Chemical mapping of a 207-nucleotide RNA with DMS and 2A3. The DMS profile rests on 5,602 reads. High DMS reactivity at an A or C suggests that its Watson-Crick edge is free. 2A3 is a SHAPE reagent: it acylates the 2'-hydroxyl of flexible nucleotides of all four kinds. The reactions ran in a buffer of 150 mM KOAc, 10 mM MgCl2 and 150 mM bicine (pH 8.5), at 24 C. For 2A3, 3,393 sequencing reads were counted.
RNA sequence: GGGAACGACUCGAGUAGAGUCGAAAAGUCUAAUUCGUUAGACAUGCGCGAUAUGGACAGUUGUCAGUGCCGCUGUGACGAAGAACUCGGAAACGAGGGAGUCACAGUGGCACUUGGAUUUACUGUCCUAAGUCACCAUGUGCAGUUCGCUGCACAAUACAUCUGCAGAAUUCGUUCUGCAGAUGUAAAAAGAAACAACAACAACAAC
Reactivity to DMS in 0.01 (KOAc 150mM, MgCl2 10mM, bicine 150mM(pH8.5), 24C), signal-to-noise 2, nucleotides 027 to 156: g020u000c000u000a040a050u000u000c270g020u000u000a050g000a020c010a170u000g000c070g020c030g020a050u010a300u010g000g010a020c010a040g030u010u000g020u010c000a030g000u010g010c010c020g030c000u020g010u000g000a030c000g000a130a170g030a060a230c020u000c000g000g020a160a170a300c030g000a040g000g000g000a280g030u000c000a020c000a020g000u010g010g000c000a010c000u000u000g010g000a030u000u000u010a020c020u000g000u000c000c000u010a000a060g000u010c010a020c010c020a180u000g010u000g000c030a040g020u000u020c280g050c020u000g030c000a060c010a040a240
Reactivity to 2A3 in 0.01 (KOAc 150mM, MgCl2 10mM, bicine 150mM(pH8.5), 24C), signal-to-noise 4, nucleotides 027 to 156: g000u010c000u000a000a090u110u130c240g070u060u040a010g010a040c020a090u200g110c130g000c030g070a060u030a020u220g000g010a000c000a000g010u030u010g010u040c000a010g000u000g010c010c000g000c000u000g010u000g000a010c000g100a230a120g020a060a010c000u000c010g030g060a100a070a080c000g000a020g010g030g010a030g000u010c000a000c010a000g000u010g010g000c000a010c000u000u000g010g000a000u080u040u080a030c000u000g000u010c000c000u000a000a000g010u010c010a030c100c020a100u110g000u000g000c000a020g010u040u160c190g060c100u000g000c000a000c000a000a000